Source: RMDB library 15KLIB, as collected in RNAgym. The record gives the reactivity of an RNA of 170 nucleotides to DMS and 2A3. 2A3 adducts were read by reverse transcription with SuperScript II with manganese. The DMS profile rests on 15,301 reads.
RNA sequence: GGGAACGACUCGAGUAGAGUCGAAAAGUUCACAUCCCCAACCCGCGGGCCGGCUACUCUUCUUUCCCUUCUCUCGUCUUCCUCGGUCAACCUUCGAAGUUCCUCUUCUUCCUCCCUGCUGAGGUUCCAAGGCACGUCUUCGGACGUGCCAAAAGAAACAACAACAACAAC
Reactivity to DMS in 0.01 (KOAc 150mM, MgCl2 10mM, bicine 150mM(pH8.5), 24C), signal-to-noise 4, nucleotides 027 to 129: g000u000u000c100a120c160a080u040c020c020c030c070a160a100c090c030c000g010c060g060g030g030c000c000g020g040c080u010a070c070u050c070u050u000c030u030u030u070c030c020c040u000u000c030u040c040u000c040g020u000c060u000u000c040c010u010c040g020g020u020c080a050a090c030c020u020u080c070g060a020a020g020u000u030c040c010u000c020u000u050c040u000u030c010c010u000c030c020c070u010g010c060u020g010a100g000g030u000u030c000c000a070a130
Reactivity to 2A3 in 0.01 (KOAc 150mM, MgCl2 10mM, bicine 150mM(pH8.5), 24C), signal-to-noise 2, nucleotides 027 to 129: g050u120u130c060a030c030a150u070c000c000c000c000a020a040c000c010c020g000c000g000g000g000c000c000g010g000c010u000a040c010u030c000u070u070c000u020u030u020c000c000c000u050u000c020u010c020u000c000g050u000c000u070u030c010c000u000c000g000g040u050c010a060a060c060c000u040u050c000g070a060a020g010u040u020c020c000u020c010u010u000c000u030u020c000c000u010c000c000c000u030g010c060u060g020a000g010g010u010u000c020c010a030a030